[RMDB]
RNA sequence: GGGAACGACUCGAGUAGAGUCGAAAACCACACUCUUAUGUCUUCUCGCAGAACUCUUUGGGUGAAAUUAAAGUAGGCGACUCGGGGAGAGGGUGUGGGGGAAGAGUAAGGUGUCCAUGGCAGGAUGACUUAUGUAGCUGUUCGCAGCUACAUAAGUAAAAGAAACAACAACAACAAC
Reactivity to 2A3 in 0.01 (KOAc 150mM, MgCl2 10mM, bicine 150mM(pH8.5), 24C), signal-to-noise 4, nucleotides 027 to 126: c010c000a000c010a010c000u160c010u060u120a040u230g220u050c010u040u020c020u040c020g020c030a030g020a140a090c020u020c040u080u090u080g040g020g010u090g090a050a070a030u170u140a120a050a060g080u120a070g120g120c120g090a060c050u040c070g010g000g000g020a180g040a040g040g000g010u170g010u080g010g010g010g040g000a050a080g000a010g060u040a050a030g030g020u020g020u000c030c020a040u040g070g000c040a030g000g060a070u080g020
Reactivity to DMS in 0.01 (KOAc 150mM, MgCl2 10mM, bicine 150mM(pH8.5), 24C), signal-to-noise 4, nucleotides 027 to 126: c010c000a130c070a040c020u000c020u000u010a060u010g000u000c020u010u000c010u000c050g000c110a120g010a150a090c040u000c020u000u000u010g020g010g010u000g000a080a080a140u000u010a050a080a100g010u010a070g010g010c130g010a080c110u000c050g000g000g000g010a120g000a060g010g010g010u000g010u000g010g000g000g010g000a050a030g010a110g010u010a030a050g000g000u000g000u000c040c030a060u010g000g000c090a070g000g010a090u000g010